[RMDB]
RNA sequence: GGGAACGACUCGAGUAGAGUCGAAAAUCAGACUCGUACAGUGACAAUGAGACUAAUCAUACAAACGUACCAAUAUCCAGUACGGGUGGUACCAAUAAUAAAACUGUUCCGCAGACAAGCGAACAGGAAUCGCGCAGUACUUCGGUACUGCGCGAUUAAAAGAAACAACAACAACAAC
Reactivity to 2A3 in 0.01 (KOAc 150mM, MgCl2 10mM, bicine 150mM(pH8.5), 24C), signal-to-noise 1, nucleotides 027 to 126: u100c040a000g100a090c000u000c000g000u150a070c070a000g030u110g100a000c140a000a190u160g000a040g010a160c000u100a130a080u070c000a030u000a140c030a040a300a000c050g020u040a010c000c000a000a110u000a000u270c050c000a000g030u000a000c000g000g000g050u000g000g000u080a140c000c000a080a010u080a080a090u050a000a010a100a000c000u000g030u000u000c230c000g000c000a010g020a120c060a190a050g000c060g000a000a000c000a000g000g000
Reactivity to DMS in 0.01 (KOAc 150mM, MgCl2 10mM, bicine 150mM(pH8.5), 24C), signal-to-noise 1, nucleotides 027 to 126: u040c180a140g040a010c000u000c000g050u000a000c300a240g070u020g180a090c290a000a040u000g000a100g020a160c000u000a130a110u000c240a000u040a160c300a020a000a020c110g130u000a000c000c000a000a020u160a070u000c000c000a180g000u000a000c000g000g000g040u000g000g000u000a000c130c070a040a110u000a180a040u000a020a110a300a300c000u000g000u000u000c040c000g260c000a160g000a020c300a000a040g000c020g000a000a000c000a000g000g000